[RMDB]
Conditions: 150 mM KOAc, 10 mM MgCl2 and 150 mM bicine (pH 8.5), 24 C. This 177-nucleotide RNA was probed chemically with 2A3 and DMS. In probing experiments dimethyl sulfate is read out at A N1 and C N3, which are open when not base-paired. For DMS, 3,129 sequencing reads were counted. The 2A3 profile rests on 6,974 reads. 2A3 adducts were read by reverse transcription with SuperScript II with manganese.
RNA sequence: GGGAACGACUCGAGUAGAGUCGAAAAGCUCGCCUCAUUCGCAUGGGGCCUGCUCUAAGGUGGGCCAGCUAAAAGCGACAUUGCAAAUGUGGAAUGUGAGAGUGGUAGGGUUAAAACCUGACUCUGUCUAUAUGUUAUGCUUCGGCAUAACAUAUAGAAAAGAAACAACAACAACAAC
Reactivity to 2A3 in 0.01 (KOAc 150mM, MgCl2 10mM, bicine 150mM(pH8.5), 24C), signal-to-noise 4, nucleotides 027 to 126: g030c010u010c020g020c020c010u020c000a000u050u030c020g000c040a010u020g040g000g110g000c000c000u010g000c000u010c030u150a180a080g070g000u020g000g010g000c010c020a030g010c050u090a140a110a050a000g010c020g030a040c020a060u120u210g000c020a040a050a030u040g010u040g070g050a100a060u130g050u080g070a050g010a010g010u060g040g140u100a070g020g010g020u060u080a040a110a020a050c000c010u030g030a040c010u010c020u060g030u010
Reactivity to DMS in 0.01 (KOAc 150mM, MgCl2 10mM, bicine 150mM(pH8.5), 24C), signal-to-noise 3, nucleotides 027 to 126: g010c010u010c090g000c000c000u010c000a020u010u000c080g020c060a010u000g000g020g020g040c020c020u000g020c010u010c150u020a120a110g010g050u000g010g000g010c020c000a190g020c030u010a070a070a090a170g010c020g000a140c040a030u000u010g040c050a030a020a030u010g030u000g000g010a090a030u000g010u000g000a040g000a060g010u020g020g020u000a110g020g000g000u000u000a100a050a070a150c040c020u000g000a040c030u000c010u000g020u000